[RMDB]
RNA sequence: GGGAACGACUCGAGUAGAGUCGAAAAAGAAAUAAGAGGGACAAGAAUCUGACCUGCACGUCCUCGUGGUGUCCCUCGGAAACGUGCUCAACGCGCGGCUGACGCAGGCAGUAAAUAAAGAAAAAAACUAAGAAAGUAAGUUCGCUUACUUUCUUAGAAAAGAAACAACAACAACAAC
Reactivity to 2A3 in 0.01 (KOAc 150mM, MgCl2 10mM, bicine 150mM(pH8.5), 24C), signal-to-noise 2, nucleotides 027 to 126: a000g010a000a030a000u100a010a060g010a000g020g010g020a020c040a030a070g010a070a120u040c010u060g100a250c020c000u010g020c020a020c060g050u060c000c040u060c060g030u070g080g000u030g000u030c010c000c000u000c010g000g010a040a030a000c010g000u030g000c020u040c170a140a090c080g030c010g000c000g080g000c060u070g010a010c050g000c020a000g000g000c010a010g000u010a010a000a010u110a000a070a040g120a100a080a040a020a000a010a010
Reactivity to DMS in 0.01 (KOAc 150mM, MgCl2 10mM, bicine 150mM(pH8.5), 24C), signal-to-noise 3, nucleotides 027 to 126: a090g000a070a060a070u010a090a110g010a030g000g020g000a010c000a060a120g010a060a120u010c020u010g000a100c000c010u000g000c030a150c120g000u000c020c070u000c150g010u010g010g020u010g010u000c010c010c000u010c010g010g000a040a040a090c030g010u000g000c000u010c250a070a090c200g010c010g020c010g010g010c070u000g030a040c070g000c010a010g010g030c010a000g000u010a090a090a080u020a020a100a150g030a010a000a050a070a050a040a140